[RMDB]
RNA sequence: GGGAACGACUCGAGUAGAGUCGAAAAGAGGGUAGCUCUGACUCUGCCCGAUGACACCAACCUGCCCUGUGACCUAUCGGCGACGAUAAGUAGCAGGGUGUUCCGUGUUGGAACCUCCACCCUUUAGCUAUCUCGUUAUGUUCGCAUAACGAGAUAGAAAAGAAACAACAACAACAAC
Reactivity to DMS in 0.01 (KOAc 150mM, MgCl2 10mM, bicine 150mM(pH8.5), 24C), signal-to-noise 9, nucleotides 027 to 126: g000a130g010g010g010u010a050g010c100u010c080u000g000a080c080u010c000u000g000c030c010c010g010a090u020g000a150c270a110c060c040a060a070c040c090u020g010c000c000c000u000g010u010g000a050c090c300u000a010u000c000g000g000c300g000a270c000g000a000u000a000a020g010u000a170g000c000a010g000g000g020u000g000u010u010c080c090g020u020g010u000u030g000g000a080a100c040c020u000c030c030a130c090c070c020u010u010u020a080g010
Reactivity to 2A3 in 0.01 (KOAc 150mM, MgCl2 10mM, bicine 150mM(pH8.5), 24C), signal-to-noise 9, nucleotides 027 to 126: g050a010g030g050g090u170a050g040c020u040c100u160g040a050c020u010c000u030g000c000c000c010g000a030u040g010a010c020a010c060c000a010a010c000c020u050g000c000c000c000u010g020u050g020a080c000c010u000a000u000c000g030g010c060g060a080c010g000a030u010a030a020g010u010a010g010c000a000g000g010g000u000g000u030u030c030c040g040u040g030u140u030g010g020a030a030c010c010u030c020c010a060c020c020c000u030u050u070a050g010